An RNA of 177 nucleotides, treated with 2A3 and DMS and read out base by base. DMS adducts were read by reverse transcription with MarathonRT. The data come from the RNA Mapping Database (RMDB), library OK1LIB. Values cover nucleotides 27 to 126. The RNA was probed in 150 mM KOAc, 10 mM MgCl2 and 150 mM bicine (pH 8.5) at 24 C.
RNA sequence: GGGAACGACUCGAGUAGAGUCGAAAAGCAAUGUGGGGGGCCACAGGAUGGGUUCUGCGCUGUAUGGGGUUGCGAGACCACCGGGGAAACCUAUUGGAGACCCACCUCCUCAUGGGACUACAUCACAACAAAAGCGUUGAUUCGUCAACGCUUUUGUAAAAGAAACAACAACAACAAC
Reactivity to 2A3 in 0.01 (KOAc 150mM, MgCl2 10mM, bicine 150mM(pH8.5), 24C), signal-to-noise 3, nucleotides 027 to 126: g030c040a060a090u080g000u100g040g020g010g000g000g040c010c010a020c010a010g100g050a100u050g040g000g010u140u020c010u050g060c000g020c040u050g180u140a190u300g040g110g040g090u100u170g000c030g010a030g030a020c020c010a030c030c000g010g010g010g000a030a040a030c000c010u030a140u130u180g020g000a040g010a000c000c000c000a010c000c000u000c000c020u000c000a030u080g050g020g020a000c000u010a030c050a120u080c120a000c060a160
Reactivity to DMS in 0.01 (KOAc 150mM, MgCl2 10mM, bicine 150mM(pH8.5), 24C), signal-to-noise 2, nucleotides 027 to 126: g000c060a070a010u030g030u010g050g010g030g000g000g000c140c070a080c080a090g000g000a180u000g000g020g060u000u000c020u000g000c110g050c120u040g000u040a080u100g030g010g010g000u000u080g000c020g000a100g010a080c080c030a050c050c120g000g030g030g030a020a150a230c060c050u030a040u050u010g000g000a050g000a300c040c010c020a070c060c000u000c020c010u000c040a020u020g000g000g000a020c070u000a040c040a080u000c070a010c120a110